This 177-nucleotide RNA was probed chemically with DMS. The data come from the RNA Mapping Database (RMDB), library M2PK50. The reactions ran in a buffer of 150 mM KOAc, 10 mM MgCl2 and 150 mM bicine (pH 8.5), at 24 C. DMS adducts were read by reverse transcription with MarathonRT.
RNA sequence: GGGAACGACUCGAGUAGAGUCGAAAAUCAUGGUGGUUCGCCACCAUGAACUGUCUAGUCGCUAGAAAACGAUCAAAACUAGCGACUAGACAAACGAUCGAACUGGGGGACAGUUCGCUGUCCCCAAGAUCGAUGUUGUAUUCGUACAACAUCGAUCAAAAGAAACAACAACAACAAC
Reactivity to DMS in 0.01 (KOAc 150mM, MgCl2 10mM, bicine 150mM(pH8.5), 24C), signal-to-noise 4, nucleotides 027 to 126: u000c000a000u000g000g020u000g010g010u000u010c190g000c010c000a000c010c000a010u000g000a010a110c200u000g010u000c000u010a010g010u000c000g000c000u000a000g000a080a050a140a140c180g000a160u030c180a070a080a080a110c000u000a000g000c000g000a000c000u000a000g050a000c000a000a040a050c140g000a110u000c100g010a060a120c150u010g000g020g000g010g000a040c000a010g010u000u010c190g030c000u000g020u000c000c000c000c020a020a030